[RMDB]
RNA sequence: GGGAACGACUCGAGUAGAGUCGAAAAAAAGACGCGGUUGCCGAUCGGUAUGGAUGCCACCGUGACGGCUCAAUCACACAAGUGCCAACUAUAACGAGGCGCUCGCUAUUGCUGCGUAACUGACGGCUAGAUACAGCCAGGUUCGCCUGGCUGUAAAACUUCUUGUUACUUUCGAGUAACAAGAAGUAAAAGAAACAACAACAACAAC
Reactivity to DMS in 0.01 (KOAc 150mM, MgCl2 10mM, bicine 150mM(pH8.5), 24C), signal-to-noise 2, nucleotides 027 to 156: a090a050a050g020a060c010g020c030g020g000u000u000g020c040c010g000a110u010c030g020g010u000a070u000g020g010a130u000g000c040c020a030c020c030g030u000g010a160c080g020g080c070u000c090a090a120u000c040a070c070a090c070a080a030g040u000g010c030c020a070a160c090u000a120u000a060a080c060g010a250g020g020c010g020c000u000c030g020c020u000a080u000u000g000c010u000g000c010g000u000a110a090c050u000g020a130c080g000g010c030u000a100g020a300u000a010c020a010g000c000c010a010g020g040u000u000c300g000c020c000u000g000g000c000u000g000u000a000a020a050
Reactivity to 2A3 in 0.01 (KOAc 150mM, MgCl2 10mM, bicine 150mM(pH8.5), 24C), signal-to-noise 4, nucleotides 027 to 156: a000a000a010g120a000c030g010c010g010g020u060u110g010c020c000g070a120u020c020g020g030u090a070u120g080g060a060u100g050c030c020a010c000c010g010u010g040a050c030g060g000c020u040c040a030a100u100c020a020c010a020c010a200a010g010u000g030c010c010a070a020c050u090a070u080a300a050c080g020a050g010g010c000g010c030u060c030g020c040u080a060u110u240g020c030u020g010c010g010u030a070a050c040u070g070a090c030g030g010c030u040a020g010a080u060a050c010a000g010c010c000a010g010g010u040u020c020g060c060c000u020g000g000c000u010g000u000a000a010a000
Overview:
An RNA of 207 nucleotides, treated with DMS and 2A3 and read out base by base. The RNA was probed in 150 mM KOAc, 10 mM MgCl2 and 150 mM bicine (pH 8.5) at 24 C. Source: RMDB library M2RFPK, as collected in RNAgym. For 2A3, 3,467 sequencing reads were counted.